[RMDB]
Structure probing data (2A3) for a 177-nucleotide construct.
RNA sequence: GGGAACGACUCGAGUAGAGUCGAAAACGGGAAUAACCGCGGGCAACCAGAAAACCGCCCACGCCGCCCAGCACGGCCCCGCUUAAUGCGGCAAGGUCAGAUCCAAACAGCAUCUGAAAAAGCGCCGGUCUCACACAAACUUCGGUUUGUGUGAGACAAAAGAAACAACAACAACAAC
Reactivity to 2A3 in 0.01 (KOAc 150mM, MgCl2 10mM, bicine 150mM(pH8.5), 24C), signal-to-noise 1, nucleotides 027 to 126: c060g010g040g060a200a240u290a020a020c000c000g000c000g030g060g020c010a030a160c000c010a020g180a050a100a000a000c050c110g020c010c000c000a010c070g010c010c000g050c000c010c010a000g030c050a030c030g090g000c000c020c000c000g020c000u020u190a190a020u300g040c000g000g000c040a090a000g010g150u020c000a000g000a050u000c070c000a110a110a100c000a010g010c000a000u060c000u000g050a010a010a010a010a010g040c010g070c050c000g080